This 207-nucleotide RNA was probed chemically with DMS and 2A3. DMS adducts were read by reverse transcription with MarathonRT. It was measured as part of the RMDB library OK3TST. For 2A3, 1,700 sequencing reads were counted. The reactions ran in a buffer of 150 mM KOAc, 10 mM MgCl2 and 150 mM bicine (pH 8.5), at 24 C. 2A3 adducts were read by reverse transcription with SuperScript II with manganese.
RNA sequence: GGGAACGACUCGAGUAGAGUCGAAAAUAUGAUGAAUUUACCUGAUGUUGGGGAAAUAUGAACCUGACAUGAUUAAGAUUGCUCUUUCGGUGGCUGGUAAUUUAAUAAGAAAUCGAGACUACAUUCCCGGGAGACGAGGAUAUAGCUACUACGUUUACACUCUCUUAGAAUUCGUUCUAAGAGAGUGAAAAGAAACAACAACAACAAC
Reactivity to DMS in 0.01 (KOAc 150mM, MgCl2 10mM, bicine 150mM(pH8.5), 24C), signal-to-noise 2, nucleotides 027 to 156: u020a100u020g030a180u000g030a110a080u000u000u000a120c030c050u010g000a060u000g010u000u000g060g000g000g000a060a090a120u010a170u010g010a100a190c020c000u020g030a050c010a030u000g010a170u000u000a120a110g000a160u000u000g000c040u000c040u000u000u020c060g030g050u010g000g020c050u020g020g020u000a000a070u010u010u000a090a150u000a120a130g000a100a080a060u000c040g020a140g020a050c020u000a060c020a070u000u000c000c010c000g040g030g010a110g010a170c050g000a040g000g040a030u020a040u000a040g030c030u000a060c050u000a080c070g020u000u000u000a180
Reactivity to 2A3 in 0.01 (KOAc 150mM, MgCl2 10mM, bicine 150mM(pH8.5), 24C), signal-to-noise 3, nucleotides 027 to 156: u220a070u110g030a030u070g030a080a130u040u120u110a110c010c010u040g070a010u010g010u020u010g000g000g000g050a020a210a030u290a110u150g050a060a030c010c000u000g000a010c010a020u050g020a070u110u100a050a040g060a100u030u140g030c020u020c000u050u060u080c040g020g020u020g050g000c050u000g010g040u030a030a030u050u100u060a120a110u120a110a050g090a070a110a010u080c030g000a020g020a040c030u080a030c070a080u070u000c020c000c020g000g020g000a060g010a010c060g010a010g000g010a000u060a010u030a160g040c010u020a030c050u040a040c110g010u000u020u010a010